About this RNA:
Source: RMDB library OK2TST, as collected in RNAgym. Structure probing data (2A3 and DMS) for a 177-nucleotide construct. The 2A3 profile rests on 1,915 reads. Reactivities are given for positions 27 through 126. For 2A3 the reverse transcriptase was SuperScript II with manganese. High DMS reactivity at an A or C suggests that its Watson-Crick edge is free.
[RMDB]
RNA sequence: GGGAACGACUCGAGUAGAGUCGAAAAGGGGUGCCUGCUCGGGGCUGCUCGGUGGGAGCAUCCGCCGCGCCCUGCUCUGCGGACUUUGAACCUCCCGGGCGGACGGCGCCGGCCGGGAGGGGGCCGCUCAUGUAAGAAAUUUCGAUUUCUUACAUGAAAAAGAAACAACAACAACAAC
Reactivity to 2A3 in 0.01 (KOAc 150mM, MgCl2 10mM, bicine 150mM(pH8.5), 24C), signal-to-noise 1, nucleotides 027 to 126: g040g000g000g000u030g050c040c020u040g030c060u060c050g090g010g000g000c040u030g010c010u030c060g180g080u160g100g200g010a020g060c020a040u020c000c040g070c010c010g000c000g000c000c010c000u020g010c010u020c020u050g000c000g040g000a060c090u180u180u260g060a030a020c000c010u000c000c000c000g020g000g030c030g010g010a040c000g060g050c040g050c000c000g050g120c030c000g020g030g000a010g020g000g020g040g020c000c010g030c050
Reactivity to DMS in 0.01 (KOAc 150mM, MgCl2 10mM, bicine 150mM(pH8.5), 24C), signal-to-noise 2, nucleotides 027 to 126: g020g000g000g030u000g010c040c080u000g020c080u000c050g040g010g000g010c100u000g020c040u010c050g020g030u010g030g010g000a070g020c060a040u000c010c010g030c050c040g010c050g020c010c010c010u000g010c110u000c040u010g010c010g000g000a030c050u000u010u000g010a120a300c040c020u000c020c000c030g010g000g000c020g000g010a060c060g020g010c060g010c030c020g010g010c020c000g020g000g020a030g000g000g000g010g020c020c020g010c050